This 177-nucleotide RNA was probed chemically with DMS and 2A3. Values cover nucleotides 27 to 126. 2A3 adducts were read by reverse transcription with SuperScript II with manganese.
[RMDB]
RNA sequence: GGGAACGACUCGAGUAGAGUCGAAAAUUUUAGGUAUCUAUCAAAACUAUUCUGAUGAUCAAUACAGUAUUUUUGUCGCAUUAUUAUUACGGUAGUGUAGACAUUAGUUUCCAAGCGGAAGAAACUGAAAAAGUGGUAGAUUCGUCUACCACUUUUUAAAAGAAACAACAACAACAAC
Reactivity to DMS in 0.01 (KOAc 150mM, MgCl2 10mM, bicine 150mM(pH8.5), 24C), signal-to-noise 7, nucleotides 027 to 126: u010u030u010u020a060g010g010u010a020u000c030u020a040u000c040a050a060a110a140c180u020a090u030u010c080u010g010a080u010g010a040u010c080a090a070u020a110c090a070g010u010a050u010u000u000u000u000g010u010c000g000c000a010u000u000a010u000u000a090u020u040a080c260g000g000u010a010g010u000g010u000a080g030a010c000a010u010u010a030g010u000u000u000c010c020a100a120g010c200g000g010a080a050g000a050a050a040c050u000g010
Reactivity to 2A3 in 0.01 (KOAc 150mM, MgCl2 10mM, bicine 150mM(pH8.5), 24C), signal-to-noise 4, nucleotides 027 to 126: u140u100u020u080a080g020g010u100a030u040c060u010a030u010c030a010a020a100a260c060u100a160u200u170c080u080g080a070u030g000a020u050c020a030a040u120a090c050a010g140u080a170u050u060u030u010u030g010u010c020g020c040a000u000u020a000u020u050a120u080u160a060c140g000g010u000a000g000u000g020u040a110g010a000c000a000u020u080a040g030u010u000u030c030c030a130a000g060c030g100g000a040a070g030a050a130a020c030u040g010